Conditions: 150 mM KOAc, 10 mM MgCl2 and 150 mM bicine (pH 8.5), 24 C. Chemical mapping of a 177-nucleotide RNA with DMS and 2A3. For 2A3 the reverse transcriptase was SuperScript II with manganese. DMS (dimethyl sulfate) methylates the pairing face of unpaired adenines and cytosines.
[RMDB]
RNA sequence: GGGAACGACUCGAGUAGAGUCGAAAAUACUGUUUUGAUGGCUUCUCAGGCUGCACAUUCGCCGCUGAGACGGGGGUUGCACUCUAUUCACUGCAUGACUUGUGGCCCGCCGAUGUUGCGGAGGCGACUACAACGUGAUCUUCGGAUCACGUUGUAGAAAAGAAACAACAACAACAAC
Reactivity to DMS in 0.01 (KOAc 150mM, MgCl2 10mM, bicine 150mM(pH8.5), 24C), signal-to-noise 3, nucleotides 027 to 126: u000a100c080u020g010u010u010u000u000g010a090u000g010g000c070u000u000c020u000c030a120g000g000c050u000g020c070a090c140a140u010u000c080g020c010c030g020c040u010g000a160g000a080c060g000g000g000g000g000u010u010g000c030a020c280u000c040u000a100u000u010c060a080c100u000g000c110a150u010g000a070c120u000u010g050u000g010g000c020c000c020g010c010c020g010a100u000g000u010u000g000c050g010g010a110g000g000c000g010a150
Reactivity to 2A3 in 0.01 (KOAc 150mM, MgCl2 10mM, bicine 150mM(pH8.5), 24C), signal-to-noise 2, nucleotides 027 to 126: u100a000c050u040g110u060u110u140u190g200a160u150g010g000c000u110u060c000u000c060a040g090g000c020u070g010c030a050c030a140u090u070c060g000c040c010g050c060u060g010a000g040a070c000g000g000g040g000g000u020u050g000c020a010c000u000c090u070a120u160u130c110a080c200u140g040c030a110u030g010a010c010u090u040g000u030g050g000c010c010c000g020c020c000g030a070u130g050u210u120g070c060g000g020a000g000g040c040g030a010